This 177-nucleotide RNA was probed chemically with DMS. The RNA was probed in 150 mM KOAc, 10 mM MgCl2 and 150 mM bicine (pH 8.5) at 24 C.
[RMDB]
RNA sequence: GGGAACGACUCGAGUAGAGUCGAAAAAAUUUAGAUUAUCCAGGUGUAGCGGUGAAUUUCGUAGAGAUCUGGUGGAUAAUGAACCGGUGGCGAAGGCGAAAGAUAACCGCUGAAAUGCUGAAGUGAAAGAGAAGGAAAACUUCGGUUUUCCUUCUCUAAAAGAAACAACAACAACAAC
Reactivity to DMS in 0.01 (KOAc 150mM, MgCl2 10mM, bicine 150mM(pH8.5), 24C), signal-to-noise 1, nucleotides 027 to 126: a140a050u000u010u000a050g010a120u020u010a080u000c060c100a190g000g000u000g030u000a040g020c000g040g010u000g010a040a120u000u010u000c020g040u000a200g000a220g000a130u000c000u020g030g000u000g020g020a120u020a180a100u000g000a100a030c040c020g030g060u000g000g000c300g040a070a080g000g020c000g000a000a050a040g000a120u000a300a020c030c000g030c000u000g000a020a020a110u000g020c000u000g000a010a100g000u000g010a110a070